Record summary:
The record gives the reactivity of an RNA of 177 nucleotides to DMS and 2A3. The RNA was probed in 150 mM KOAc, 10 mM MgCl2 and 150 mM bicine (pH 8.5) at 24 C. For DMS the reverse transcriptase was MarathonRT. As a SHAPE reagent, 2A3 marks flexible, mostly unpaired nucleotides at the ribose 2'-OH. Values cover nucleotides 27 to 126.
[RMDB]
RNA sequence: GGGAACGACUCGAGUAGAGUCGAAAACCAGAGAGCUCCCGUUCUUCGGCGUUUCGGGGAGGAAACGCCCGCCUAGAUCGAAUGAUCGAGAAAAUAGCCAGCCCGUCGCGAUUAUCCCCCGCGGCGGAACCACCAGUUUGUUCGCAAACUGGUGGUUAAAAGAAACAACAACAACAAC
Reactivity to DMS in 0.01 (KOAc 150mM, MgCl2 10mM, bicine 150mM(pH8.5), 24C), signal-to-noise 2, nucleotides 027 to 126: c020c010a120g020a080g000a210g000c040u000c000c020c000g030u010u000c080u010u020c110g030g020c020g000u010u000u000c030g020g000g050g000a120g020g000a010a050a040c040g000c010c020c090g000c070c040u000a120g020a000u010c030g000a130a120u030g020a060u000c000g000a140g020a040a070a030a060u020a080g020c050c030a080g000c130c000c010g000u000c010g020c000g010a120u020u060a120u040c010c000c000c210c030g000c000g040g000c030g000g020
Reactivity to 2A3 in 0.01 (KOAc 150mM, MgCl2 10mM, bicine 150mM(pH8.5), 24C), signal-to-noise 3, nucleotides 027 to 126: c010c000a000g040a000g000a020g070c010u020c000c000c020g030u040u020c020u070u100c040g040g000c000g030u000u020u020c090g020g010g030g010a110g060g020a060a020a000c010g030c010c050c000g050c010c010u050a040g000a030u020c040g060a130a160u290g030a030u040c020g010a010g090a070a120a020a060u080a020g060c050c020a010g010c030c000c000g020u010c000g000c000g000a030u030u110a080u220c010c000c000c000c010g000c000g010g000c000g000g000